[RMDB]
RNA sequence: GGGAACGACUCGAGUAGAGUCGAAAAGGGAGAACCGAGCAGAGGCAUAGCGAACUGCGCACGGCGAAGCCUUGAGGGAAUGCCGUAGGACCCGGGUUCGAUUCCCGGCCGCUCCACCGAAGGGCCAACCAGUACCGGAUUUCGAUCCGGUACUGGUAAAAGAAACAACAACAACAAC
Reactivity to 2A3 in 0.01 (KOAc 150mM, MgCl2 10mM, bicine 150mM(pH8.5), 24C), signal-to-noise 2, nucleotides 027 to 126: g050g000g010a060g000a070a020c040c010g040a040g000c040a000g020a080g110g000c000a060u160a080g080c050g060a060a020c040u020g000c040g000c040a060c010g040g000c050g020a070a040g020c000c030u080u080g050a150g030g010g040a030a060u100g010c000c020g030u010a060g080g000a030c010c010c000g010g000g000u040u090c030g020a060u070u060c000c010c000g000g000c010c020g020c010u000c000c010a020c010c000g040a030a060g030g000g000c010c010a010
Reactivity to DMS in 0.01 (KOAc 150mM, MgCl2 10mM, bicine 150mM(pH8.5), 24C), signal-to-noise 2, nucleotides 027 to 126: g000g000g000a100g010a090a050c070c000g000a140g000c090a080g010a080g020g030c050a060u000a090g020c070g000a120a080c080u010g010c100g020c080a050c030g100g000c000g000a130a120g030c020c000u000u020g000a150g020g000g010a110a150u010g000c010c000g030u050a050g000g000a090c070c030c010g000g000g000u030u010c140g000a230u040u010c000c000c000g010g000c040c050g000c030u000c050c010a200c060c020g000a090a100g000g020g040c000c110a090
The data come from the RNA Mapping Database (RMDB), library OK1LIB. Chemical mapping of a 177-nucleotide RNA with 2A3 and DMS. The RNA was probed in 150 mM KOAc, 10 mM MgCl2 and 150 mM bicine (pH 8.5) at 24 C. For DMS, 2,300 sequencing reads were counted. For 2A3 the reverse transcriptase was SuperScript II with manganese. Reactivities are given for positions 27 through 126.